[RMDB]
RNA sequence: GGGAACGACUCGAGUAGAGUCGAAAAGCGUAACGGCUGGGUGUAACCCAACUCUAGGUGUGCUGAGUAGCGGGCUUGACUCCGUAACAAAUAGGCACUGGUGGUAAAAAGCAUCCCACCUACUCACAAAGCUCCAAAUUCUUCGGAAUUUGGAGAAGACCAUGUGGAUCUUCGGAUCCACAUGGUCAAAAGAAACAACAACAACAAC
Reactivity to 2A3 in 0.01 (KOAc 150mM, MgCl2 10mM, bicine 150mM(pH8.5), 24C), signal-to-noise 1, nucleotides 027 to 156: g030c040g050u030a000a060c060g060g010c140u030g000g030g050u070g070u060a030a030c010c010c010a040a030c050u050c050u090a040g080g030u030g010u000g070c020u010g070a030g040u040a040g030c020g000g040g060c080u150u130g020a020c050u000c020c000g000u020a000a090c010a020a050a090u110a050g020g000c020a020c020u040g040g000u010g000g000u090a130a080a000a000a060g030c010a010u080c060c000c000a020c000c020u060a050c020u080c110a090c040a100a110a040g040c010u000c010c020a000a000a000u000u000c020u010u030c080g100g000a020a020u000u000u000g000g000a010g000a000a010
The data come from the RNA Mapping Database (RMDB), library M2RFPK. This 207-nucleotide RNA was probed chemically with 2A3. The 2A3 profile rests on 649 reads. Reactivities are given for positions 27 through 156.